This 177-nucleotide RNA was probed chemically with DMS and 2A3. Values cover nucleotides 27 to 126. The RNA was probed in 150 mM KOAc, 10 mM MgCl2 and 150 mM bicine (pH 8.5) at 24 C. High DMS reactivity at an A or C suggests that its Watson-Crick edge is free. The data come from the RNA Mapping Database (RMDB), library OK1LIB.
[RMDB]
RNA sequence: GGGAACGACUCGAGUAGAGUCGAAAAAUCGGCGCUCAGUGGUGUCACCCAGGCAUUCAUGAAGAAGGCUUGGAAGUCCCCAAUUGCCUUGGGGAAAAACAAAUUCAAGGAGCUGCAUUGCACUGUCCUUAGGAUCACGUUUCGACGUGAUCCUAAGAAAAGAAACAACAACAACAAC
Reactivity to DMS in 0.01 (KOAc 150mM, MgCl2 10mM, bicine 150mM(pH8.5), 24C), signal-to-noise 2, nucleotides 027 to 126: a050u000c060g000g000c040g000c020u010c000a090g000u000g000g030u000g000u020c070a120c170c000c040a060g000g000c040a020u000u010c020a120u000g020a180a130g000a000a030g000g000c000u000u000g000g000a140a080g000u000c000c000c000c020a030a070u010u020g010c210c260u010u010g000g010g010g010a020a010a030a030a040c230a060a080a050u010u040c070a080a040g010g000a040g000c020u030g010c030a060u000u020g000c120a080c070u020g000u000c090
Reactivity to 2A3 in 0.01 (KOAc 150mM, MgCl2 10mM, bicine 150mM(pH8.5), 24C), signal-to-noise 4, nucleotides 027 to 126: a020u080c020g040g000c030g000c010u010c050a020g030u050g070g020u000g050u060c040a030c020c000c010a000g020g000c000a010u040u020c030a050u240g040a050a150g020a020a010g150g000c010u040u020g060g020a080a060g140u010c000c000c000c010a050a040u090u220g120c010c040u020u010g000g000g000g110a070a000a040a000a000c050a000a070a060u090u100c020a030a020g050g000a020g060c050u050g000c060a040u030u110g010c080a040c050u040g060u110c000